[RMDB]
RNA sequence: GGGAACGACUCGAGUAGAGUCGAAAAGAUAUGGAACGGUGGCUUUCAAUGAUGGACAUAAUUCGACAGAUCAUCGGAAACGAUGAUCUGUCGAAUUAUGUCUUGAGAAACCACACGUUCCUAAGUCGAUAAAAUACAAGUUCGCUUGUAUUUUAUCAAAAGAAACAACAACAACAAC
Reactivity to DMS in 0.01 (KOAc 150mM, MgCl2 10mM, bicine 150mM(pH8.5), 24C), signal-to-noise 4, nucleotides 027 to 126: g000a100u010a300u010g000g000a010a010c000g020g030u000g010g010c300u010u010u010c000a210a260u010g010a180u000g000g010a020c000a010u000a020a020u000u000c000g010a020c010a030g010a020u000c000a000u010c000g000g010a090a090a210c010g020a010u000g000a000u000c000u000g000u000c010g000a000a000u000u000a000u000g010u000c000u000u010g000a120g010a010a010a020c010c000a000c000a110c010g010u000u000c000c010u000a010a090g010u010c130
This 177-nucleotide RNA was probed chemically with DMS.
For DMS the reverse transcriptase was MarathonRT.
Conditions: 150 mM KOAc, 10 mM MgCl2 and 150 mM bicine (pH 8.5), 24 C.